The record gives the reactivity of an RNA of 177 nucleotides to DMS and 2A3.
Values cover nucleotides 27 to 126.
The 2A3 profile rests on 1,467 reads.
[RMDB]
RNA sequence: GGGAACGACUCGAGUAGAGUCGAAAAGAAUCGCGGGGCACUGUCAGUGUUAAUGGCGACACAUUCAUGGUUAGUGGUUUGAGCUGGAAAGAUCAUGAGUACAUGACCAGUGCGCUGGCCCCUGAAGGCCUUCAGUGUCAUUCGUGACACUGAAGGCAAAAGAAACAACAACAACAAC
Reactivity to DMS in 0.01 (KOAc 150mM, MgCl2 10mM, bicine 150mM(pH8.5), 24C), signal-to-noise 2, nucleotides 027 to 126: g000a110a070u000c190g010c080g020g000g010g040c070a010c040u000g020u000c060a070g010u000g000u000u000a050a150u010g010g010c090g010a050c120a060c090a070u000u000c030a020u000g020g000u010u000a080g000u010g000g040u000u010u010g010a160g060c020u010g040g000a110a120a110g000a020u000c040a010u010g000a080g020u000a080c300a070u000g010a040c200c090a030g010u000g020c020g010c000u010g010g010c020c010c040c040u030g010a060a120g010
Reactivity to 2A3 in 0.01 (KOAc 150mM, MgCl2 10mM, bicine 150mM(pH8.5), 24C), signal-to-noise 2, nucleotides 027 to 126: g060a040a080u170c070g000c040g140g020g050g000c010a010c100u080g040u100c040a050g020u000g020u030u090a140a160u180g100g050c040g040a010c010a000c000a080u050u020c010a000u010g050g010u070u080a060g040u070g160g040u110u160u210g160a110g010c000u090g060g160a170a030a080g060a020u040c000a010u030g010a000g050u040a030c030a100u040g010a070c040c020a020g050u010g070c050g010c060u010g030g030c000c040c000c000u000g060a020a020g100